Description:
The data come from the RNA Mapping Database (RMDB), library TTRDEL. The record gives the reactivity of an RNA of 177 nucleotides to 2A3 and DMS. The reactions ran in a buffer of 150 mM KOAc, 10 mM MgCl2 and 150 mM bicine (pH 8.5), at 24 C.
RNA sequence: GGGAACGACUCGAGUAGAGUCGAAAAGAUAUGGAUUUCUGAUGACCACGAAUCCGCGUGUCGGAAACGACACCGGACUAUGCAAGGAAAUCCUAAGUCAAAAUCUCCAUAGUUCGCUAUGGAGAAAUCGUAAACAUGUCUUCGGACAUGUUUACGAAAAAGAAACAACAACAACAAC
Reactivity to 2A3 in 0.01 (KOAc 150mM, MgCl2 10mM, bicine 150mM(pH8.5), 24C), signal-to-noise 1, nucleotides 027 to 126: g000a000u010a020u050g020g010a000u020u000u000c010u100g130a150u300g060a080c020c110a180c300g230a110a040u000c000c000g040c190g010u000g000u000c010g010g000a030a000a000c030g000a000c000a010c030c040g010g000a000c030u170a150u290g000c010a060a030g030g030a000a000a010u000c000c000u000a030a000g010u000c000a050a000a070a300u030c000u000c000c000a000u000a000g010u040u090c300g040c190u000a000u010g000g010a010g000a060a000a010
Reactivity to DMS in 0.01 (KOAc 150mM, MgCl2 10mM, bicine 150mM(pH8.5), 24C), signal-to-noise 1, nucleotides 027 to 126: g020a000u000a070u010g020g000a000u000u000u000c000u000g000a210u000g000a120c170c240a200c160g040a010a160u000c000c000g000c300g010u010g010u000c000g020g000a000a000a000c010g000a000c000a000c000c000g010g000a030c060u000a000u050g020c000a260a300g000g010a010a020a020u000c000c000u000a020a120g000u000c010a200a000a160a120u000c000u000c020c000a010u000a000g000u000u050c260g020c000u000a000u000g000g000a010g000a000a000a000